Record summary:
Structure probing data (DMS) for a 177-nucleotide construct. For DMS the reverse transcriptase was MarathonRT. The RNA was probed in 150 mM KOAc, 10 mM MgCl2 and 150 mM bicine (pH 8.5) at 24 C.
[RMDB]
RNA sequence: GGGAACGACUCGAGUAGAGUCGAAAACGCGUCGCCCUCACCGGCCUUGAUCGCGUGGAAGGCCAUCCGGGUGGUCUGCAGCGACGACGAACAGUACCGGUUGACCGUGGUGCCCGGCAGGAAGUCAGUAAAAUCGGGCUUUCGAGCCCGAUUUUACAAAAGAAACAACAACAACAAC
Reactivity to DMS in 0.01 (KOAc 150mM, MgCl2 10mM, bicine 150mM(pH8.5), 24C), signal-to-noise 1, nucleotides 027 to 126: c110g000c030g000u000c010g000c060c050c070u000c040a080c080c110g020g020c160c060u000u050g010a110u000c000g010c060g080u000g000g010a300a070g030g000c010c010a030u000c050c020g000g000g010u000g020g000u020c030u000g060c220a300g010c040g000a010c070g050a060c040g000a040a110c210a010g010u000a150c040c000g000g030u010u030g000a090c060c120g020u020g000g010u010g000c000c040c030g020g000c130a040g010g010a080a070g020u030c050a090